The record gives the reactivity of an RNA of 177 nucleotides to DMS. The RNA was probed in 150 mM KOAc, 10 mM MgCl2 and 150 mM bicine (pH 8.5) at 24 C. It was measured as part of the RMDB library OK2TRN.
RNA sequence: GGGAACGACUCGAGUAGAGUCGAAAAAUGCAUACCAGUACCAAACCUCCAUGUCUCACCAAACUAUGUAAAAAUGGGGAGCCAUUGGAACUGCUUUGGGAUACAACCCUACCAGCUAUGGUAGGGUUCCCGCUUAUUGGUUCGCCAAUAAGCGGGAAAAAGAAACAACAACAACAAC
Reactivity to DMS in 0.01 (KOAc 150mM, MgCl2 10mM, bicine 150mM(pH8.5), 24C), signal-to-noise 1, nucleotides 027 to 126: a070u010g000c130a060u000a270c070c050a230g010u000a180c020c020a030a060a060c120c100u010c000c010a030u000g020u010c000u000c020a050c000c000a050a050a110c190u000a110u000g000u040a000a060a060a140a050u000g000g000g000g000a070g060c000c000a000u000u000g030g000a070a070c230u020g010c170u010u000u000g000g000g040a170u000a140c280a020a070c000c000c000u010a000c010c000a030g020c300u000a060u010g020g000u000a000g020g010g000u000
Reactivities are rounded to 0.1 and cut off at 0 and 3. Values cover nucleotides 27 to 126. DMS adducts were read by reverse transcription with MarathonRT.